RNA sequence: GGGAACGACUCGAGUAGAGUCGAAAAGAUAUGGAUCCGAUGGAGUUCAAGAGGGCAGCUUUGAUCUCGGAAACGAGGGAGCUGAACCAUUCGGAUCCUAAGUCAAACACGUUGUUCGCAACGUGAAGAUUAAAGUUAGGUUCGCCUAACUUUAAUCAAAAGAAACAACAACAACAAC
Reactivity to DMS in 0.01 (KOAc 150mM, MgCl2 10mM, bicine 150mM(pH8.5), 24C), signal-to-noise 9, nucleotides 027 to 126: g000a030u000a160u000g000g000a010u000c000c010g020a030u000g000g010a300g020u010u010c150a090a100g010a080g000g000g020c020a010g000c010u000u000u010g000a110u020c010u000c000g010g000a050a030a070c010g010a010g000g000g010a010g010c010u000g010a050a090c010c000a040u010u000c010g010g000a010u000c000c000u000a010a060g000u000c010a120a130a260c010a010c000g010u000u000g010u000u010c230g000c010a010a000c000g010u000g000a080a100
Reactivity to 2A3 in 0.01 (KOAc 150mM, MgCl2 10mM, bicine 150mM(pH8.5), 24C), signal-to-noise 9, nucleotides 027 to 126: g010a000u030a010u080g000g000a000u000c000c010g010a000u010g040g050a190g150u300u260c140a180a060g070a150g150g100g050c010a010g000c020u130u150u150g140a180u180c000u000c000g000g000a020a020a010c000g000a010g000g010g010a000g000c000u030g060a090a070c010c000a020u170u140c010g000g000a000u000c000c000u000a000a000g000u000c020a010a090a030c020a000c010g000u000u010g050u100u100c280g000c180a010a000c000g000u010g060a020a040

The record gives the reactivity of an RNA of 177 nucleotides to DMS and 2A3. The DMS profile rests on 19,041 reads. Conditions: 150 mM KOAc, 10 mM MgCl2 and 150 mM bicine (pH 8.5), 24 C. DMS adducts were read by reverse transcription with MarathonRT. Values cover nucleotides 27 to 126.